Conditions: 150 mM KOAc, 10 mM MgCl2 and 150 mM bicine (pH 8.5), 24 C. Chemical mapping of a 177-nucleotide RNA with 2A3 and DMS. For DMS the reverse transcriptase was MarathonRT. The 2A3 profile rests on 17,143 reads. The data come from the RNA Mapping Database (RMDB), library OK1LIB. Values cover nucleotides 27 to 126.

RNA sequence: GGGAACGACUCGAGUAGAGUCGAAAAGAAGUACUUGUCUUGGGACCACAACCACCAACCUGGGAGAGUGCACCCAACAGCAAAGCAUUGCAAGACAUAAACCACAGACAAGCUCUAGGUGCUGGAAAGCAUUGGCCUCUUUCGAGAGGCUAAUGCUAAAAGAAACAACAACAACAAC
Reactivity to 2A3 in 0.01 (KOAc 150mM, MgCl2 10mM, bicine 150mM(pH8.5), 24C), signal-to-noise 9, nucleotides 027 to 126: g100a080a010g040u080a050c020u060u080g100u100c010u030u040g040g010g030a060c020c020a070c080a110a110c020c030a030c030c030a060a060c000c030u050g010g030g000a050g010a010g020u050g000c010a070c000c000c010a030a060c020a020g070c030a030a100a020g050c070a100u050u150g000c040a050a010g040a050c020a020u180a040a150a030c040c010a040c030a060g050a030c030a080a050g010c020u020c020u070a060g100g000u050g020c020u030g020g050a160a090
Reactivity to DMS in 0.01 (KOAc 150mM, MgCl2 10mM, bicine 150mM(pH8.5), 24C), signal-to-noise 7, nucleotides 027 to 126: g010a080a100g010u020a060c040u010u020g000u010c020u000u010g000g000g020a070c090c050a070c110a090a090c090c040a050c040c080a070a080c090c080u000g020g020g000a150g010a060g020u010g010c050a100c020c000c010a080a090c170a100g020c050a040a060a100g010c080a050u000u000g000c050a070a040g000a060c090a050u010a060a070a100c040c050a050c100a030g000a070c050a030a040g000c080u000c040u010a080g000g010u000g000c020u000g010g000a130a100